[RMDB]
RNA sequence: GGGAACGACUCGAGUAGAGUCGAAAACGGAAGCAUUAAAACCAUGCGAGCUAGUCAAUGCGUGGCGUGUCUCUCCGCAGCGUGUUGGCGAAUGUAAAGAGUGACUAAGCAUGUAGUACCGAGGAUGAUAAGAGCAAUUCGUUCGCGAAUUGCUCAACAACUCAGAUCACUUCGGUGAUCUGAGUUGAAAAGAAACAACAACAACAAC
Reactivity to 2A3 in 0.01 (KOAc 150mM, MgCl2 10mM, bicine 150mM(pH8.5), 24C), signal-to-noise 3, nucleotides 027 to 156: c050g020g040a040a010g010c050a040u080u140a020a140a000a070c050c010a010u030g010c000g010a030g140c060u040a020g000u030c010a000a000u020g000c030g020u020g150g000c010g010u050g050u020c020u000c010u010c080c000g000c010a020g000c000g000u000g000u010u000g020g000c010g010a020a020u080g020u110a030a060a030g030a010g010u020g010a020c010u030a070a030g050c020a030u070g030u090a040g020u030a110c020c040g010a040g060g010a050u130g020a020u120a240a140g000a000g010c010a000a000u000u010c000g020u040u080c190g030c000g120a000a000u000u000g000c000u000c000a010a010
Reactivity to DMS in 0.01 (KOAc 150mM, MgCl2 10mM, bicine 150mM(pH8.5), 24C), signal-to-noise 1, nucleotides 027 to 156: c130g020g020a030a130g000c040a100u000u010a040a050a050a160c080c040a090u000g020c070g040a120g000c090u000a090g020u000c020a030a030u000g010c000g050u010g000g110c010g000u000g020u020c040u010c040u000c180c000g040c010a110g000c060g080u000g060u000u000g000g010c030g010a050a070u000g020u000a080a080a080g010a040g020u000g000a090c060u010a070a210g030c000a050u000g020u010a140g000u000a010c040c000g000a160g020g000a090u030g010a190u010a050a130g000a020g020c000a010a020u000u020c040g040u000u000c300g000c020g020a020a010u000u000g000c000u000c000a010a010